Chemical mapping of a 177-nucleotide RNA with 2A3 and DMS.
For 2A3 the reverse transcriptase was SuperScript II with manganese.
The 2A3 profile rests on 4,849 reads.
Reactivities are given for positions 27 through 126.
For DMS the reverse transcriptase was MarathonRT.
Source: RMDB library M2PK50, as collected in RNAgym.
RNA sequence: GGGAACGACUCGAGUAGAGUCGAAAACGACGGGUCUUCGGACCCGUCGAAAUAAUGCGUAGCUCGCGCUACGCAGGCAUCCAGUAGGUCGAGCCACCUACAAAAGCUUCGAGUUCGCUCGAAGCAAGCUAUUAGAACUCUUCGGAGUUCUAAUAGCAAAAGAAACAACAACAACAAC
Reactivity to 2A3 in 0.01 (KOAc 150mM, MgCl2 10mM, bicine 150mM(pH8.5), 24C), signal-to-noise 2, nucleotides 027 to 126: c010g020a010c000g000g010g000u000c020u060u110c250g110g010a000c000c000c000g000u010c000g000a000a000a000u100a020a040u050g020c000g000u000a000g010c040u040c170g120c040g000c050u000a000c000g000c000a000g040g020c020a060u040c020c000a010g010u000a000g000g020u030c060g080a030g040c080c030a000c010c000u010a010c000a000a120a000a010g000c000u000u000c000g000a010g020u040u100c170g040c060u000c010g010a000a000g000c010a000a010
Reactivity to DMS in 0.01 (KOAc 150mM, MgCl2 10mM, bicine 150mM(pH8.5), 24C), signal-to-noise 3, nucleotides 027 to 126: c030g000a000c000g020g010g000u010c000u000u020c230g030g000a020c000c020c000g000u000c000g010a010a060a100u000a060a100u000g000c010g020u000a000g020c000u000c300g000c300g000c000u000a000c000g000c010a000g000g010c140a130u000c040c070a110g000u000a000g000g010u010c060g010a100g000c120c100a090c000c010u000a030c020a050a030a090a110g000c000u010u000c000g000a020g010u000u020c220g010c000u000c000g000a010a010g020c000a020a030